This 177-nucleotide RNA was probed chemically with 2A3 and DMS.
The reactions ran in a buffer of 150 mM KOAc, 10 mM MgCl2 and 150 mM bicine (pH 8.5), at 24 C.
The 2A3 profile rests on 905 reads.
As a SHAPE reagent, 2A3 marks flexible, mostly unpaired nucleotides at the ribose 2'-OH.

RNA sequence: GGGAACGACUCGAGUAGAGUCGAAAAAGGAUAUAGUAUGGUCAUUAACUUAAAUGACAAACAGACAAAAACAUCUAAAGAAGGGUUAAUUUCCGUAUCACAUCCUCUUGCGGCUAAAAUUGGUAAGUACCCGAAAACGAUUCGUCGUUUUCGGGUAAAAAGAAACAACAACAACAAC
Reactivity to 2A3 in 0.01 (KOAc 150mM, MgCl2 10mM, bicine 150mM(pH8.5), 24C), signal-to-noise 2, nucleotides 027 to 126: a040g010g000a000u080a000u080a110g050u000a000u000g070g000u050c000a040u000u000a010a000c020u020u050a060a090a000u220g100a060c010a050a030a000c000a030g220a030c090a140a160a010a020a010c100a000u070c090u200a150a080a100g120a130a030g170g000g000u010u000a000a030u040u000u000c000c000g000u000a000u070c000a000c000a080u030c000c020u130c010u010u080g000c010g080g000c000u090a030a020a030a030u140u120g000g000u010a070a040g000
Reactivity to DMS in 0.01 (KOAc 150mM, MgCl2 10mM, bicine 150mM(pH8.5), 24C), signal-to-noise 2, nucleotides 027 to 126: a080g000g030a010u000a050u000a090g000u020a010u040g050g050u010c040a000u000u000a050a000c070u050u040a140a090a100u010g000a020c140a100a100a180c260a120g000a010c260a020a120a110a160a170c160a080u000c070u000a170a060a060g000a070a130g000g000g000u020u000a020a100u010u000u000c000c040g110u010a010u000c100a080c210a030u000c000c000u000c070u010u000g000c060g010g010c040u010a020a020a090a120u030u000g020g000u040a050a000g050